[RMDB]
RNA sequence: GGGAACGACUCGAGUAGAGUCGAAAAUAAAGCGUUGCUUCACGCCAUGGGAAAGGUCCACAGACUAAGUGGAAGUGGGUUGAACGAUCGUUCAGCUUAAGAUAUAGUCGGGCCCUGAUUGAAAGAUCUGGGGAGUCACUGUUCCGUAGGUGAACCUGGAUAACAUGAUGUUCGCAUCAUGUUAUCCAAAAGAAACAACAACAACAAC
Reactivity to 2A3 in 0.01 (KOAc 150mM, MgCl2 10mM, bicine 150mM(pH8.5), 24C), signal-to-noise 5, nucleotides 027 to 156: u170a030a050a020g060c030g020u030u060g020c050u050u070c020a020c040g020c020c020a100u130g010g000g040a050a060a020g030g030u000c010c010a040c000a060g080a050c070u090a160a070g050u050g060g030a050a030g070u110g030g020g000u010u010g000a000a010c040g110a280u220c200g000u010u010c000a010g010c010u020u030a040a010g030a060u090a020u040a140g030u030c000g000g070g000c000c000c030u030g020a030u010u080g050a110a080a030g010a020u010c040u130g000g000g030g000a030g020u010c020a000c080u020g050u080u020c010c010g010u060a060g010g030u040g020a050a050c010c030u010
Reactivity to DMS in 0.01 (KOAc 150mM, MgCl2 10mM, bicine 150mM(pH8.5), 24C), signal-to-noise 1, nucleotides 027 to 156: u010a030a150a120g010c060g000u000u010g000c030u000u000c050a220c000g040c010c050a120u000g010g010g000a070a080a020g030g000u010c000c030a090c080a110g010a130c060u000a030a240g030u030g020g000a030a140g010u000g010g030g040u010u010g000a020a080c000g010a170u000c140g000u080u010c000a010g010c010u000u000a050a090g000a160u000a130u000a040g010u000c010g020g000g000c020c010c060u000g000a050u000u000g000a180a090a170g010a090u010c040u030g100g000g010g040a130g010u010c170a020c020u000g020u010u000c010c000g020u030a080g010g000u010g010a090a050c060c080u010
An RNA of 207 nucleotides, treated with 2A3 and DMS and read out base by base.
The reactions ran in a buffer of 150 mM KOAc, 10 mM MgCl2 and 150 mM bicine (pH 8.5), at 24 C.
It was measured as part of the RMDB library RSTRND.
For 2A3, 4,258 sequencing reads were counted.